An RNA of 177 nucleotides, treated with 2A3 and DMS and read out base by base. Conditions: 150 mM KOAc, 10 mM MgCl2 and 150 mM bicine (pH 8.5), 24 C. The DMS profile rests on 4,691 reads. 2A3 adducts were read by reverse transcription with SuperScript II with manganese. For DMS the reverse transcriptase was MarathonRT.
RNA sequence: GGGAACGACUCGAGUAGAGUCGAAAAGAAUUCUUUCUGCUUUAUGUUUCCAGGCCAAGGUUGGCCACAAAAGAAACCUGUAGUGAACUGGAAGGCAGAAGUGAAGGCACAUCCAGUAGGCUCAGAAGAGAACAAUAGAGUUCGCUCUAUUGUUCUCAAAAGAAACAACAACAACAAC
Reactivity to 2A3 in 0.01 (KOAc 150mM, MgCl2 10mM, bicine 150mM(pH8.5), 24C), signal-to-noise 3, nucleotides 027 to 126: g020a010a080u070u020c010u040u040u020c020u020g040c030u100u170u050a170u200g070u020u040u000c010c010a020g020g000c020c020a090a060g210g010u150u050g080g000c050c000a030c030a010a090a000a020g080a020a040a020c000c020u050g040u120a080g020u030g050a090a030c030u010g020g040a040a020g030g000c050a020g020a090a020g060u070g060a040a040g030g000c040a030c000a130u020c020c010a010g080u070a050g140g010c020u020c070a030g060a130a010
Reactivity to DMS in 0.01 (KOAc 150mM, MgCl2 10mM, bicine 150mM(pH8.5), 24C), signal-to-noise 4, nucleotides 027 to 126: g000a130a110u000u010c030u000u000u000c010u000g010c030u000u000u010a080u030g010u000u000u000c010c030a080g000g030c050c030a110a130g000g010u010u000g020g000c100c070a070c170a050a050a080a100g000a140a040a040c030c020u010g010u000a080g040u010g010a120a080c010u000g000g000a020a040g000g000c010a030g000a030a020g030u010g010a050a040g000g000c120a070c120a090u000c040c020a090g010u000a090g000g010c090u000c070a050g010a140a180